Notes:
Structure probing data (DMS and 2A3) for a 177-nucleotide construct. DMS adducts were read by reverse transcription with MarathonRT. For 2A3 the reverse transcriptase was SuperScript II with manganese. 2A3 is a SHAPE reagent: it acylates the 2'-hydroxyl of flexible nucleotides of all four kinds. The data come from the RNA Mapping Database (RMDB), library OK1LIB. Values cover nucleotides 27 to 126. The reactions ran in a buffer of 150 mM KOAc, 10 mM MgCl2 and 150 mM bicine (pH 8.5), at 24 C. The DMS profile rests on 6,853 reads.
[RMDB]
RNA sequence: GGGAACGACUCGAGUAGAGUCGAAAAAGCUCCUCGGUGGCCUCGCUGCCAACAAACCGCACGUCGGGGGGGCCGGGGGGGUCCGGGUUUUCCCACAACACCGCGACCGGGGUCAUGGAGAUGUCCACAAUGUUAAUGGUUUCGACCAUUAACAUUGAAAAGAAACAACAACAACAAC
Reactivity to DMS in 0.01 (KOAc 150mM, MgCl2 10mM, bicine 150mM(pH8.5), 24C), signal-to-noise 3, nucleotides 027 to 126: a120g020c070u010c010c010u010c050g000g030u010g000g020c030c030u010c090g010c080u000g000c020c070a090a120c130a070a140a130c130c120g010c040a050c130g010u020c040g000g000g010g010g000g000g010c040c010g000g000g010g040g020g000g020u000c040c080g000g010g000u000u000u030u020c000c000c000a130c150a090a050c030a070c030c000g000c090g020a040c050c010g000g000g000g010u020c040a070u020g000g000a070g000a100u020g010u030c020c040a200
Reactivity to 2A3 in 0.01 (KOAc 150mM, MgCl2 10mM, bicine 150mM(pH8.5), 24C), signal-to-noise 8, nucleotides 027 to 126: a000g060c030u030c010c000u010c040g050g020u050g130g090c020c000u030c020g030c040u070g030c030c020a050a050c060a060a140a030c030c030g040c020a050c100g220u240c040g030g010g000g000g020g050g020c020c010g010g000g010g010g010g000g010u030c030c000g000g010g020u020u050u030u050c010c010c000a020c010a020a030c020a020c010c020g040c050g030a020c020c010g000g020g000g030u050c030a070u080g040g010a090g010a070u080g080u030c010c000a020